Structure probing data (2A3 and DMS) for a 177-nucleotide construct. 2A3 adducts were read by reverse transcription with SuperScript II with manganese. The 2A3 profile rests on 2,562 reads. The data come from the RNA Mapping Database (RMDB), library M2PK90. Reactivities are rounded to 0.1 and cut off at 0 and 3. The DMS profile rests on 2,922 reads.

RNA sequence: GGGAACGACUCGAGUAGAGUCGAAAAUGAAAGAGCGUCGCAAACACACAGACUAAGUCUCACACUGACUGACGCUAAACGGCUCUGUCAGUGUGGGAGAUAUCGGUAUUAAUGUGAGCGGAAAAAAUCUAUGCUUGAGGUUCGCCUCAAGCAUAGAAAAAGAAACAACAACAACAAC
Reactivity to 2A3 in 0.01 (KOAc 150mM, MgCl2 10mM, bicine 150mM(pH8.5), 24C), signal-to-noise 2, nucleotides 027 to 126: u160g030a060a080a050g130a020g040c030g070u070c010g000c040a020a130a020c030a010c020a000c030a010g050a060c020u080a060a100g130u020c000u000c000a010c000a000c000u010g000a000c000u020g000a010c120g000c000u020a150a220a020c090g000g000c000u020c010u010g000u000c000a010g000u010g000u010g000g010g000a010g010a000u060a010u050c020g010g000u030a080u130u100a170a090u080g000u020g000a020g000c000g000g000a030a090a000a000a020a070
Reactivity to DMS in 0.01 (KOAc 150mM, MgCl2 10mM, bicine 150mM(pH8.5), 24C), signal-to-noise 4, nucleotides 027 to 126: u000g010a080a110a090g000a100g010c070g010u000c000g020c010a080a130a100c110a050c070a030c100a080g010a040c070u010a070a160g020u000c010u000c000a010c020a000c010u010g010a020c010u000g010a000c180g030c010u020a030a080a110c300g000g000c000u000c000u000g000u000c000a000g010u000g020u000g010g000g000a000g020a080u010a070u000c050g000g010u000a050u010u000a060a130u000g010u000g010a190g000c030g010g000a000a050a090a060a100a070